[RMDB]
RNA sequence: GGGAACGACUCGAGUAGAGUCGAAAAGUUACCCCUAAAAAGUAUGUUAGAAUGAUUUUAUCGCAUCAUAUCCUUUUUUAUGUAAUUAGUUGAUAAAAUCUAUCUGUACUUAUAUUUAACGACUGAAUCCUAUUAAUGAGUUCGCUCAUUAAUAGGAAAAAGAAACAACAACAACAAC
Reactivity to DMS in 0.01 (KOAc 150mM, MgCl2 10mM, bicine 150mM(pH8.5), 24C), signal-to-noise 4, nucleotides 027 to 126: g000u010u010a080c120c000c010c130u000a070a090a140a060a050g010u000a010u020g010u020u020a010g010a070a300u000g000a010u000u000u000u000a000u000c000g000c050a100u020c000a010u000a010u040c170c110u000u030u010u010u000u000a020u010g010u020a060a150u020u010a060g000u010u020g000a010u000a000a000a000a010u000c000u010a150u010c020u010g000u010a000c010u000u000a050u010a130u020u010u000a070a090c100g000a150c080u010g000a150a170
Reactivity to 2A3 in 0.01 (KOAc 150mM, MgCl2 10mM, bicine 150mM(pH8.5), 24C), signal-to-noise 4, nucleotides 027 to 126: g020u020u090a190c020c010c000c020u060a180a010a000a030a010g010u010a000u070g070u130u200a030g010a090a050u060g000a010u000u000u000u000a000u000c010g010c010a040u030c000a000u020a060u150c010c030u110u230u140u050u130u070a020u030g020u040a110a130u130u100a170g030u050u220g010a020u010a000a010a000a000u000c010u040a050u010c000u020g010u040a000c000u020u030a040u020a060u220u150u090a060a020c070g150a050c040u050g060a020a030